Annotation:
Conditions: 150 mM KOAc, 10 mM MgCl2 and 150 mM bicine (pH 8.5), 24 C. Structure probing data (DMS and 2A3) for a 177-nucleotide construct.

RNA sequence: GGGAACGACUCGAGUAGAGUCGAAAAGGUCGUCCUUCGUGAUGGCUAGUAGCUGUGUUUCGGUUGAUUCUGGACAGUUCGACGACCUAUGGAGCCAUCACUUUCUUAUGAUGUCAAUUUCCGGUCGAGACUCAGUCUGAUUCGUCAGACUGAGUCUAAAAGAAACAACAACAACAAC
Reactivity to DMS in 0.01 (KOAc 150mM, MgCl2 10mM, bicine 150mM(pH8.5), 24C), signal-to-noise 2, nucleotides 027 to 126: g000g000u000c010g000u000c000c160u000u010c170g030u020g010a040u000g010g000c000u000a130g010u010a040g000c010u000g010u000g010u000u000u010c020g000g000u010u010g010a140u020u000c000u010g000g010a040c060a050g010u000u010c050g000a140c020g000a020c020c010u000a050u020g000g010a040g020c070c000a040u010c000a020c080u000u010u000c090u010u010a130u000g010a050u000g000u020c080a080a080u020u000u010c010c020g030g000u000c090g000
Reactivity to 2A3 in 0.01 (KOAc 150mM, MgCl2 10mM, bicine 150mM(pH8.5), 24C), signal-to-noise 3, nucleotides 027 to 126: g020g000u010c010g020u000c040c030u100u150c120g060u080g040a010u010g050g000c010u040a030g060u050a000g050c040u020g020u010g030u100u080u040c030g000g030u040u120g060a120u130u040c000u040g030g060a010c000a020g000u050u080c060g000a000c000g000a000c010c000u020a100u060g080g020a000g000c000c000a010u050c000a020c000u070u190u070c050u090u170a110u110g050a020u030g040u060c090a170a210u020u050u040c050c020g040g040u050c010g090